RNA sequence: GGGAACGACUCGAGUAGAGUCGAAAAUGGGAGGAAGUUUGACGAUCCCGUGUCAAACGGUAUAUAUACGUUCCGGCCUGCUCCUGCAGAGGAGGCUUCUGCUGUGGAGCAGAGCACCAUCAACAACCAUAAGAUACGCGUUCGCGCGUAUCUUAUGAAAAGAAACAACAACAACAAC
Reactivity to 2A3 in 0.01 (KOAc 150mM, MgCl2 10mM, bicine 150mM(pH8.5), 24C), signal-to-noise 3, nucleotides 027 to 126: u070g030g000g010a070g050g050a150a080g040u000u020u040g010a010c010g020a060u040c000c020c000g030u030g020u010c010a030a020a000c010g020g040u020a070u000a000u000a000u020a100c060g020u070u040c020c000g030g010c000c000u000g010c010u020c020c020u020g000c000a010g010a010g090g070a110g110g030c030u070u010c000u020g000c010u080g150u160g080g010a000g000c000a000g000a000g000c010a030c020c010a040u080c020a010a090c010a010a060c050
Reactivity to DMS in 0.01 (KOAc 150mM, MgCl2 10mM, bicine 150mM(pH8.5), 24C), signal-to-noise 5, nucleotides 027 to 126: u010g010g000g010a110g010g010a070a120g010u000u000u000g000a020c010g000a090u000c010c010c000g020u000g000u000c000a010a010a040c010g010g000u000a070u010a130u010a110u000a130c060g020u000u000c010c010g010g000c020c000u000g010c000u010c000c000u000g010c030a030g010a020g000g010a180g010g010c110u010u000c000u000g000c000u010g030u010g020g010a030g010c010a010g000a090g020c020a110c030c040a030u010c090a030a050c060a030a060c090
Conditions: 150 mM KOAc, 10 mM MgCl2 and 150 mM bicine (pH 8.5), 24 C. This 177-nucleotide RNA was probed chemically with 2A3 and DMS. For 2A3, 6,475 sequencing reads were counted. The data come from the RNA Mapping Database (RMDB), library OK2TRN.